[RMDB]
Chemical mapping of a 177-nucleotide RNA with DMS. For DMS, 5,594 sequencing reads were counted. Values are in units of 0.01, from 0 to 300, in steps of 10. Conditions: 150 mM KOAc, 10 mM MgCl2 and 150 mM bicine (pH 8.5), 24 C. For DMS the reverse transcriptase was MarathonRT.
RNA sequence: GGGAACGACUCGAGUAGAGUCGAAAAUACGGUUUCGACCGUACGGAAAAGUUAAACAGACUCAUCCACGAGACACUCCUGUUGUGGAUGAGUCUGUUUAACUUUAUGACACAUCGAUUCGUCGAUGGUGGUUAUUUACUUUCGAGUAAAUAACCACAAAAGAAACAACAACAACAAC
Reactivity to DMS in 0.01 (KOAc 150mM, MgCl2 10mM, bicine 150mM(pH8.5), 24C), signal-to-noise 4, nucleotides 027 to 126: u000a010c010g010g000u000u000u010c190g010a050c000c000g010u000a000c130g000g010a100a030a010a000g000u000u000a000a000a000c010a000g000a010c000u000c000a010u000c000c000a020c010g010a130g010a070c080a110c240u010c230c130u000g010u000u000g010u000g010g000a010u000g000a000g000u000c000u000g000u000u000u000a000a010c000u000u000u000a040u000g000a160c150a290c010a020u000c000g010a040u000u010c140g020u000c000g010a030u000g010